[RMDB]
RNA sequence: GGGAACGACUCGAGUAGAGUCGAAAAAUAGUGGAAACGCCUGAAUUAUUACAAAUAUUAUGCGACCAAAUCAUUGCUGAUCACGCUAAAUUACACACUAUUAUCGGCAAAUUUACGAUUGAUGAUUUAAAAGUCAUUUUAGAUUAUCUACGUGUCACGAUAUCGACUUCUUCGGAAGUCGAUAUCGAAAAGAAACAACAACAACAAC
Reactivity to 2A3 in 0.01 (KOAc 150mM, MgCl2 10mM, bicine 150mM(pH8.5), 24C), signal-to-noise 1, nucleotides 027 to 156: a000u050a000g000u010g050g050a040a040a040c010g000c060c110u090g040a110a080u240u140a140u170u200a130c100a030a150a040u160a060u170u110a010u150g080c000g090a190c060c010a030a030a000u110c080a150u200u040g030c040u050g010a080u030c030a010c040g000c010u030a030a070a060u120u140a010c010a000c000a000c060u010a040u140u000a000u050c000g000g000c000a000a000a170u150u230u140a030c000g140a180u000u140g000a000u000g000a000u000u000u070a000a000a070a000g060u130c090a100u030u000u000u000a000g000a010u000u000a000u000c000u000a000c000g050u040g090u060c050a010
This 207-nucleotide RNA was probed chemically with 2A3. 2A3 adducts were read by reverse transcription with SuperScript II with manganese. The data come from the RNA Mapping Database (RMDB), library OK3TST.